This 177-nucleotide RNA was probed chemically with 2A3 and DMS.

[RMDB]
RNA sequence: GGGAACGACUCGAGUAGAGUCGAAAAGGAAAUUGGUUCGCCAAUUUCCAAAACUGACUGAUGGACAGUCGGAAAACCAAAAACAAAAACAAAAACAACUAAAAAGCGUUCGGUUCGCCGAACGCAAGAAAUAAUGAUCGUUCGCGAUCAUUAUUUCAAAAGAAACAACAACAACAAC
Reactivity to 2A3 in 0.01 (KOAc 150mM, MgCl2 10mM, bicine 150mM(pH8.5), 24C), signal-to-noise 1, nucleotides 027 to 126: g010g010a000a000a020u020u030g000g020u040u060c130g050c050c000a000a000u000u000u000c000c000a010a030a000a010c000u000g010a000c000u000g040a100u240g170g180a110c010a010g000u000c000g010g020a030a040a010a010c060c010a020a030a020a050a040c060a010a110a010a010a000c060a030a140a070a010a010c040a050a010c040u190a080a020a110a100a040g010c000g000u000u000c020g000g100u020u090c260g030c060c000g010a000a000c000g000c000a020a000
Reactivity to DMS in 0.01 (KOAc 150mM, MgCl2 10mM, bicine 150mM(pH8.5), 24C), signal-to-noise 2, nucleotides 027 to 126: g000g000a000a000a020u000u000g010g000u020u000c260g050c030c000a010a000u000u000u000c000c000a020a030a070a150c000u000g010a010c010u010g010a260u000g020g030a110c010a020g040u000c000g000g000a040a040a050a120c000c040a020a040a040a080a120c170a020a070a050a020a040c140a080a070a030a120a040c070a050a040c170u040a040a090a030a170a090g010c010g000u010u020c000g000g000u000u010c230g010c000c000g000a000a010c000g020c000a010a030
For 2A3, 2,895 sequencing reads were counted. Conditions: 150 mM KOAc, 10 mM MgCl2 and 150 mM bicine (pH 8.5), 24 C. The DMS profile rests on 974 reads. For DMS the reverse transcriptase was MarathonRT.